The record gives the reactivity of an RNA of 207 nucleotides to 2A3 and DMS.
The RNA was probed in 150 mM KOAc, 10 mM MgCl2 and 150 mM bicine (pH 8.5) at 24 C.
Values cover nucleotides 27 to 156.
2A3 is a SHAPE reagent: it acylates the 2'-hydroxyl of flexible nucleotides of all four kinds.

RNA sequence: GGGAACGACUCGAGUAGAGUCGAAAAACGUCAGCACCCAGCUAUGAGUUCGUAACUCCGCUGAUUGAAGGCACUAGCUUGUACAUUAGGGUGGACAAUGAAACAAUGUACAUCAUACCCGCUGAAGAUGACAGGUGCAGGUGGCUGCGCAACUGCCGUCGAUAUGAUACUUCGGUAUCAUAUCGACAAAAGAAACAACAACAACAAC
Reactivity to 2A3 in 0.01 (KOAc 150mM, MgCl2 10mM, bicine 150mM(pH8.5), 24C), signal-to-noise 5, nucleotides 027 to 156: a000c040g040u080c020a020g010c010a040c020c020c000a000g010c020u090a160u260g000a000g030u040u100c090g060u150a050a050c020u020c030c040g000c010u020g050a110u060u180g080a160a080g050g010c020a020c060u040a030g060c020u020u060g000u050a070c020a050u040u040a090g040g100g000u070g010g010a020c060a080a150u130g120a100a040a000c050a040a060u130g020u120a070c020a050u040c000a020u070a100c010c030c020g010c070u080g050a070a030g040a070u090g010a030c010a020g010g030u030g010c010a020g000g040u070g040g030c020u040g010c030g030c040a050a070c040u090g030c030c060
Reactivity to DMS in 0.01 (KOAc 150mM, MgCl2 10mM, bicine 150mM(pH8.5), 24C), signal-to-noise 1, nucleotides 027 to 156: a030c060g020u000c020a050g010c000a050c130c030c030a100g020c040u020a060u000g010a150g060u000u000c150g000u020a070a120c000u000c000c080g000c000u000g000a070u000u000g000a140a020g000g000c040a040c010u000a130g040c010u000u020g050u000a070c030a070u000u010a130g040g020g040u000g020g010a130c000a070a130u000g040a280a050a030c060a050a070u000g050u000a030c030a060u030c020a130u000a080c050c030c000g000c020u000g010a140a100g020a070u000g020a080c010a000g010g020u000g000c040a100g000g040u000g000g000c040u000g000c010g000c020a030a070c050u000g010c120c080